[RMDB]
RNA sequence: GGGAACGACUCGAGUAGAGUCGAAAAUUGGUAUGAUUUAUGGUUCAGGUAUCACGAUUCCAGGCUACGGUGUGUUAUUGAAUACGACAAUGGAUGGCUUUGAUGUAGUAGAUGGUGGUAUUAACGAUAGGUUAGCUUCUUUCGAGAAGCUAACCUAAAAAGAAACAACAACAACAAC
Reactivity to 2A3 in 0.01 (KOAc 150mM, MgCl2 10mM, bicine 150mM(pH8.5), 24C), signal-to-noise 1, nucleotides 027 to 126: u080u200g060g020u100a130u080g110a010u040u010u020a240u200g000g000u040u110c100a060g010g010u020a000u040c050a000c170g020a040u040u100c210c000a000g010g100c020u000a000c000g000g000u050g000u000g000u190u000a000u040u000g230a140a170u090a040c130g000a040c150a090a160u040g030g050a110u050g000g000c010u090u170u000g100a100u070g000u000a140g000u040a060g020a020u100g000g000u000g040g030u000a020u020u260a190a140c000g000a040
Reactivity to DMS in 0.01 (KOAc 150mM, MgCl2 10mM, bicine 150mM(pH8.5), 24C), signal-to-noise 3, nucleotides 027 to 126: u020u020g020g000u000a050u000g030a070u040u010u020a080u000g000g020u010u020c080a060g020g000u000a050u020c060a080c110g000a080u000u010c070c090a100g010g010c020u010a070c050g000g000u010g000u000g020u010u000a150u080u030g000a090a050u020a070c140g030a070c090a040a100u010g000g000a090u010g010g010c090u020u010u020g020a080u010g010u000a050g010u040a030g000a050u020g000g060u000g000g000u000a040u020u000a040a030c140g020a190